[RMDB]
RNA sequence: GGGAACGACUCGAGUAGAGUCGAAAAUCGGUGUCGAUAACAAUGACGGUCGUGCGCAGGCUGUCGCGUGCUUCGGCCAGUGCGCCCUCCAGUUCGCGGAUGGAGCCGACCUUUUUCGCAUCCGCAACCAGCUCGAGGAGUUCGCUCCUCGAGCUGGAAAAGAAACAACAACAACAAC
Reactivity to 2A3 in 0.01 (KOAc 150mM, MgCl2 10mM, bicine 150mM(pH8.5), 24C), signal-to-noise 1, nucleotides 027 to 126: u060c000g000g060u070g020u090c070g040a070u060a190a120c010a100a210u270g090a070c000g030g000u010c020g000u070g110c040g000c140a090g020g000c000u010g090u080c020g020c000g110u090g000c030u100u020c040g040g000c000c000a000g030u040g090c060g000c020c010c010u040c010c040a010g060u090u140c020g030c020g040g000a020u020g030g000a030g000c020c020g070a110c100c080u160u100u000u120u100c070g020c050a010u030c030c010g010c000a010a020
This 177-nucleotide RNA was probed chemically with 2A3.